[RMDB]
RNA sequence: GGGAACGACUCGAGUAGAGUCGAAAAAACGAGUGGGAGUACACUGCUUUCUUGAACGUCUACUCCUUCACGAAGAUGGCAAGCGGUGACACUGAAGUGACUCGGAACAGUCGCUACAAAGCGAACCAGUAAGGGUGUUUUUCGAAACACCCUUACUAAAAGAAACAACAACAACAAC
Reactivity to DMS in 0.01 (KOAc 150mM, MgCl2 10mM, bicine 150mM(pH8.5), 24C), signal-to-noise 4, nucleotides 027 to 126: a070a050c040g000a050g020u000g020g000g010a060g030u000a070c060a030c020u010g020c060u000u000u000c070u020u000g010a180a070c060g010u000c160u010a050c060u020c050c040u000u010c050a070c030g020a120a080g020a150u000g010g030c100a030a070g010c030g020g010u000g000a130c080a050c060u010g010a110a100g000u000g030a010c010u000c020g010g010a090a100c230a090g000u000c010g010c000u000a050c250a070a070a050g010c020g000a020a120c080c090
Reactivity to 2A3 in 0.01 (KOAc 150mM, MgCl2 10mM, bicine 150mM(pH8.5), 24C), signal-to-noise 1, nucleotides 027 to 126: a000a000c050g010a010g000u040g020g030g020a030g050u040a020c000a000c040u050g020c010u090u080u120c010u040u140g050a050a010c030g000u000c010u030a030c040u050c010c000u030u070c000a020c000g050a070a020g030a020u030g050g010c030a070a010g030c020g090g020u020g040a030c070a000c080u030g030a110a020g030u040g060a070c000u000c000g010g020a000a050c070a070g040u010c020g020c000u020a040c090a010a070a010g000c020g040a020a030c030c000
The record gives the reactivity of an RNA of 177 nucleotides to DMS and 2A3. The RNA was probed in 150 mM KOAc, 10 mM MgCl2 and 150 mM bicine (pH 8.5) at 24 C. For 2A3 the reverse transcriptase was SuperScript II with manganese. The 2A3 profile rests on 1,225 reads.